[RMDB]
RNA sequence: GGGAACGACUCGAGUAGAGUCGAAAAGCCUCAGGCUUCAAGCUGGACACGCUGCUGAAGCUGGCGGAUGUGAAGGGCGUGGACCGCAAGACCAGCCUGCUCCACUUUGUGCUCGACCAGCUGCUCACCACCAGUAUGACUUCGGUCAUACUGGUGGAAAAGAAACAACAACAACAAC
Reactivity to 2A3 in 0.01 (KOAc 150mM, MgCl2 10mM, bicine 150mM(pH8.5), 24C), signal-to-noise 2, nucleotides 027 to 126: g020c000c030u090c040a060g040g000c000u050u030c020a020a000g010c030u080g040g000a030c020a010c050g050c030u200g020c020u040g070a050a020g020c020u040g020g040c000g030g060a120u120g080u080g170a090a110g070g010g000c080g060u020g010g060a100c050c000g000c070a040a000g030a030c000c060a010g010c000c000u040g000c000u000c020c010a110c060u080u170u110g110u140g030c030u070c050g080a070c030c010a020g050c000u060g000c010u000c010a050
Reactivity to DMS in 0.01 (KOAc 150mM, MgCl2 10mM, bicine 150mM(pH8.5), 24C), signal-to-noise 3, nucleotides 027 to 126: g010c030c010u000c070a100g020g010c000u010u000c060a050a190g020c010u010g030g000a300c060a080c070g000c040u000g000c100u020g010a050a060g010c000u000g010g000c070g000g010a090u000g010u000g030a130a180g000g010g000c030g000u010g010g010a120c050c120g010c100a060a130g010a100c220c090a060g000c010c010u000g010c050u000c020c020a060c040u000u010u010g010u000g010c120u000c060g010a090c010c010a030g020c020u000g020c040u010c090a260